[RMDB]
This 177-nucleotide RNA was probed chemically with DMS. Source: RMDB library OK2TST, as collected in RNAgym.
RNA sequence: GGGAACGACUCGAGUAGAGUCGAAAAAGACACAGCAAGCGAGGAGCGGCGCGUAUGAGCCGCGCCGGCGACGAUGCGGAACGAAGUGAUGAGGAGGAGCGGCGCAUGAGCGUUAUGAACGGCCGGGCGCAAAGUGGGUAUUCGUACCCACUUUGCGAAAAGAAACAACAACAACAAC
Reactivity to DMS in 0.01 (KOAc 150mM, MgCl2 10mM, bicine 150mM(pH8.5), 24C), signal-to-noise 2, nucleotides 027 to 126: a060g000a140c100a060c110a070g010c040a060a090g020c070g010a120g010g030a130g000c040g000g000c030g010c030g020u000a070u000g000a060g030c240c010g020c020g030c000c010g010g030c070g000a080c070g010a070u010g000c080g010g000a080a070c090g000a030a070g020u000g000a090u000g020a100g060g000a060g010g010a090g000c060g010g010c030g040c090a050u010g000a080g010c020g000u010u000a080u000g000a050a130c110g010g010c020c040g000g010g000